Background:
Structure probing data (DMS and 2A3) for a 177-nucleotide construct. The DMS profile rests on 1,332 reads. The data come from the RNA Mapping Database (RMDB), library M2PK50.
RNA sequence: GGGAACGACUCGAGUAGAGUCGAAAACUGUCGUUCUUCGGAACGACAGAAAGUACGCGUGGGUCACGCAAGGAGGAGCGUGUGGGACGCGACAAACCCAAAAAAGCGUUCGGUUCGCCGAACGCAACAGGGUAGCUUAGUUCGCUAAGCUACCCUGAAAAGAAACAACAACAACAAC
Reactivity to DMS in 0.01 (KOAc 150mM, MgCl2 10mM, bicine 150mM(pH8.5), 24C), signal-to-noise 1, nucleotides 027 to 126: c000u000g010u000c000g020u000u000c000u000u000c240g050g000a000a000c000g000a010c000a000g000a020a040a120g010u000a070c020g030c040g030u000g030g010g000u000c000a020c000g020c020a070a060g030g010a280g020g000a100g010c030g010u010g010u000g020g000g000a040c000g020c010g020a020c070a020a110a110c020c030c000a000a030a040a110a050a130g000c010g020u000u000c000g000g000u000u030c150g030c000c000g020a000a010c000g020c000a000a050
Reactivity to 2A3 in 0.01 (KOAc 150mM, MgCl2 10mM, bicine 150mM(pH8.5), 24C), signal-to-noise 2, nucleotides 027 to 126: c010u000g000u010c000g000u000u000c010u020u010c110g110g010a000a030c010g000a010c010a000g010a010a000a000g020u080a070c020g020c030g010u050g020g200g080u060c010a010c010g040c050a050a060g140g090a050g030g030a120g040c040g010u010g000u020g020g170g040a000c000g000c000g030a000c020a000a070a060c000c010c000a080a070a000a000a000a060g020c010g000u000u020c020g010g030u020u080c230g030c090c020g000a000a000c000g000c000a000a000